[RMDB]
An RNA of 207 nucleotides, treated with 2A3 and read out base by base. For 2A3 the reverse transcriptase was SuperScript II with manganese. The 2A3 profile rests on 1,612 reads.
RNA sequence: GGGAACGACUCGAGUAGAGUCGAAAACAAUCAGUUCGCUGAUUGAAAAAAUCCUAAGUCGACGCGAAACACCACGACCAGCCGAAGAACUAUCGGAAACGAUAGGGAGGCUGGUGGUGGAGUCGAUAUGGAAAAAAUGUUCUGUUCGCAGAACAAAAGAAUUAGCUACGUUCGCGUAGCUAAUUCUAAAAGAAACAACAACAACAAC
Reactivity to 2A3 in 0.01 (KOAc 150mM, MgCl2 10mM, bicine 150mM(pH8.5), 24C), signal-to-noise 2, nucleotides 027 to 156: c000a000a000u000c010a010g060u080u100c170g040c090u000g000a020u010u010g050a090a000a000a010a020a020u030c030c000u060a160a010g020u000c010g010a010c020g080c030g090a100a130a150c050a060c020c010a000c000g190a020c020c010a000g020c020c010g200a250a020g010a020a010c010u000a000u000c000g010g000a140a040a030c020g000a000u000a000g040g000g010a010g000g000c000u000g000g000u000g000g000u000g000g020a010g000u000c010g000a000u000a030u070g010g000a020a070a040a030a030a080u110g010u000u000c010u010g040u040u070c300g000c070a000g000a000a000c040a050a100a030